[RMDB]
RNA sequence: GGGAACGACUCGAGUAGAGUCGAAAAGAGUUAGAGGGAAGAACCUGCGAUCUACAUGAAACUAUCCAGAUUGGUGUGACGGAAAAUUUGCACAGGCUGUAGCAUCAUGGUUUGUGACAACUUCCCAGCAACGACCAAUUUUCGAAUUGGUCGUUGCAAAAGAAACAACAACAACAAC
Reactivity to DMS in 0.01 (KOAc 150mM, MgCl2 10mM, bicine 150mM(pH8.5), 24C), signal-to-noise 1, nucleotides 027 to 126: g000a130g000u010u010a100g010a110g020g030g000a090a100g000a130a080c070c050u010g030c110g000a040u000c030u010a060c080a040u000g000a120a100a130c060u000a030u010c140c020a100g000a100u020u010g010g010u000g010u000g010a040c080g000g000a140a030a070a140u000u020u020g010c050a050c080a070g000g000c080u000g000u000a010g010c160a090u000c080a000u010g000g030u000u000u010g020u040g010a150c120a020a110c050u010u000c020c000c050a190
Reactivity to 2A3 in 0.01 (KOAc 150mM, MgCl2 10mM, bicine 150mM(pH8.5), 24C), signal-to-noise 1, nucleotides 027 to 126: g150a030g050u160u140a080g050a100g000g000g050a040a040g010a000a090c020c050u090g000c010g040a070u080c080u170a050c000a030u080g070a050a010a010c030u070a090u120c070c000a030g130a180u150u160g190g010u090g030u030g020a050c040g080g110a040a010a030a110u110u080u140g000c090a040c040a060g140g000c000u020g010u000a000g000c090a020u060c000a000u030g030g080u010u040u130g010u010g000a010c040a060a010c000u000u040c020c010c040a000